Chemical mapping of a 177-nucleotide RNA with DMS and 2A3. It was measured as part of the RMDB libraries RFM100 and RFMREP. DMS adducts were read by reverse transcription with MarathonRT. 2A3 adducts were read by reverse transcription with SuperScript II with manganese.
RNA sequence: GGGAACGACUCGAGUAGAGUCGAAAAGUUGUGAUCGCAGGUAUUGCCACUGUACUGCUGAUGCUUGGCUUUUUUGUUGGUGUUGGCAUCUUCGUGAUGAAAGAUCAGAAGGAGCACGGACACCAGGCGAAUUUGCCUUUUUCGAAAGGCAAAUUCGAAAAGAAACAACAACAACAAC
Reactivity to DMS in 0.01 (KOAc 150mM, MgCl2 10mM, bicine 150mM(pH8.5), 24C), signal-to-noise 1, nucleotides 027 to 126: g020u000u000g030u000g010a040u010c060g010c080a020g000g000u000a080u020u000g010c040c040a010c040u000g010u000a080c020u000g000c030u010g020a060u010g020c040u000u010g000g020c050u000u000u020u010u000u010g030u000u000g000g010u000g000u000u000g060g020c020a070u020c010u000u000c010g030u000g050a010u000g030a140a040a100g000a030u020c000a170g010a010a010g030g000a070g000c000a090c110g000g000a050c000a000c010c010a070g000g020
Reactivity to 2A3 in 0.01 (KOAc 150mM, MgCl2 10mM, bicine 150mM(pH8.5), 24C), signal-to-noise 2, nucleotides 027 to 126: g000u000u020g090u050g030a070u020c070g000c050a000g010g080u100a120u070u070g050c000c020a030c010u050g070u090a040c080u000g000c080u070g020a100u070g070c050u020u060g040g000c000u010u000u000u000u090u190g050u070u050g020g000u050g010u010u010g010g000c010a070u000c000u000u030c050g280u070g010a010u010g090a100a150a160g170a050u020c000a030g010a030a000g030g000a050g000c010a040c100g100g000a000c000a000c030c000a020g010g030